[RMDB]
RNA sequence: GGGAACGACUCGAGUAGAGUCGAAAACAGGGUAGUGCCAUUACACUGUUAUUACUGAGUGUUUUUCUAGCGACUUGGCUGCUGGGCUAUGGCUUUGCCCUCUAACCAGCGGUCUUGGUCUUGCACACUCAGUCAGUAGGUUCGCCUACUGACUGAGAAAAGAAACAACAACAACAAC
Reactivity to 2A3 in 0.01 (KOAc 150mM, MgCl2 10mM, bicine 150mM(pH8.5), 24C), signal-to-noise 4, nucleotides 027 to 126: c000a020g000g010g030u030a040g030u040g220c070c010a050u080u100a010c020a010c040u020g070u020u060a170u190u150a120c120u100g080a050g090u050g020u000u030u030u040u100c050u070a060g030c000g030a020c000u040u060g000g000c000u000g000c010u000g010g020g060c090u020a020u060g000g000c000u090u090u240g010c000c000c000u000c000u010a010a010c000c010a000g020c000g000g000u010c000u010u040g000g010u020c010u030u100g010c010a030c000a010
Reactivity to DMS in 0.01 (KOAc 150mM, MgCl2 10mM, bicine 150mM(pH8.5), 24C), signal-to-noise 3, nucleotides 027 to 126: c010a030g000g000g020u000a020g010u010g030c170c210a130u030u000a040c020a020c030u000g000u000u020a080u010u020a100c100u020g000a060g000u000g000u000u020u030u000u000c040u030a120g020c100g000a020c000u010u000g010g020c000u000g020c000u010g000g030g000c120u000a020u030g000g000c010u020u010u040g000c000c000c010u000c010u000a010a010c000c000a020g000c000g000g020u000c000u000u010g000g010u000c000u010u010g020c070a070c090a090
Conditions: 150 mM KOAc, 10 mM MgCl2 and 150 mM bicine (pH 8.5), 24 C.
An RNA of 177 nucleotides, treated with 2A3 and DMS and read out base by base.
2A3 adducts were read by reverse transcription with SuperScript II with manganese.